[RMDB]
The record gives the reactivity of an RNA of 207 nucleotides to 2A3 and DMS.
RNA sequence: GGGAACGACUCGAGUAGAGUCGAAAACUCAGUGAUCGAGGGCUAUGUGACAUGCAGGGAGUGCUUCUGCUUACAUACCCGAAGGUCUCUUAUGACCCCUCUAAGGUACGAGUGUCCGUGUUCUCAGGAGGGAAGCAAGGUGACACUUGGCUUCCAAUCAGUCAGUCAGUUUCGACUGACUGACUGAAAAAGAAACAACAACAACAAC
Reactivity to 2A3 in 0.01 (KOAc 150mM, MgCl2 10mM, bicine 150mM(pH8.5), 24C), signal-to-noise 2, nucleotides 027 to 156: c050u050c060a020g010u020g020a030u010c020g010a030g020g000g060c120u020a000u040g040u030g070a070c050a140u170g000c000a010g000g050g050a180g130u150g160c020u080u060c040u000g020c000u010u030a000c020a010u000a020c000c000c000g010a040a000g000g000u000c000u020c020u030u070a180u200g100a050c000c000c050c000u030c100u100a070a100g070g000u110a100c050g030a040g030u010g040u030c040c040g020u040g030u070u030c020u000c020a050g070g000a050g090g110g000a000a000g010c000a010a020g070g000u100g030a020c020a000c010u000u040g110g050c010u040u060c010c010a010a090
Reactivity to DMS in 0.01 (KOAc 150mM, MgCl2 10mM, bicine 150mM(pH8.5), 24C), signal-to-noise 2, nucleotides 027 to 156: c090u000c060a110g000u000g020a030u000c030g020a300g010g000g060c190u000a080u010g030u000g040a070c170a100u010g000c020a040g050g030g010a300g060u000g000c040u000u000c040u000g020c000u000u000a050c000a080u000a020c000c000c000g050a200a140g020g010u000c000u000c120u000u000a090u020g000a160c060c030c000c030u010c040u010a160a080g020g000u010a030c020g020a050g030u000g020u000c040c030g040u000g020u000u000c010u000c030a060g000g000a180g010g000g010a030a060g000c030a080a100g010g000u000g010a140c080a140c060u000u010g000g010c090u010u000c000c010a080a300
2A3 adducts were read by reverse transcription with SuperScript II with manganese. For 2A3, 1,307 sequencing reads were counted. The reactions ran in a buffer of 150 mM KOAc, 10 mM MgCl2 and 150 mM bicine (pH 8.5), at 24 C.